[RMDB]
This 207-nucleotide RNA was probed chemically with DMS and 2A3. DMS adducts were read by reverse transcription with MarathonRT. Values cover nucleotides 27 to 156. It was measured as part of the RMDB library OK3TST.

RNA sequence: GGGAACGACUCGAGUAGAGUCGAAAACAGGUCCACUUUCAGAAAACCAGAACAUGCAGGAUCCAGACGCCUCGGACGAGGGCAAGCCGGUAGUCAGUGACGAGCAGCUAUCUCGCUGGCUGGGUACCAACUCCCCCCGAGAUUUGGAAGAGAGGCGAAUCUGAUCUUAUUUCGAUAAGAUCAGAUUAAAAGAAACAACAACAACAAC
Reactivity to DMS in 0.01 (KOAc 150mM, MgCl2 10mM, bicine 150mM(pH8.5), 24C), signal-to-noise 4, nucleotides 027 to 156: c070a070g040g020u000c000c020a140c080u000u000u000c050a130g000a100a060a090a130c050c020a100g000a060a070c070a060u010g030c050a080g020g010a080u000c020c030a120g030a230c020g010c040c000u010c010g020g020a180c080g020a040g020g020g020c040a040a040g040c010c030g030g020u000a030g000u000c000a040g020u000g000a020c030g020a060g020c110a150g020c150u010a120u000c010u000c010g010c010u020g060g010c010u010g010g010g020u000a170c010c000a020a050c020u000c010c010c010c010c010c010g010a070g020a120u000u010u020g020g000a110a090g000a090g020a050g020g020c050g010
Reactivity to 2A3 in 0.01 (KOAc 150mM, MgCl2 10mM, bicine 150mM(pH8.5), 24C), signal-to-noise 4, nucleotides 027 to 156: c040a020g020g030u020c030c010a040c030u030u140u110c080a060g080a100a150a080a060c020c010a030g040a080a010c010a060u090g010c020a020g020g060a040u060c020c010a020g040a110c030g070c040c010u010c010g060g020a050c030g040a080g010g000g020c050a060a020g060c040c050g040g050u080a080g280u010c020a010g010u020g080a060c060g020a030g010c030a020g030c030u120a100u180c030u010c020g000c030u040g040g000c000u000g000g020g040u030a050c010c000a060a170c090u130c020c010c010c010c010c020g030a010g000a080u070u070u040g030g020a050a020g020a020g000a020g040g010c020g000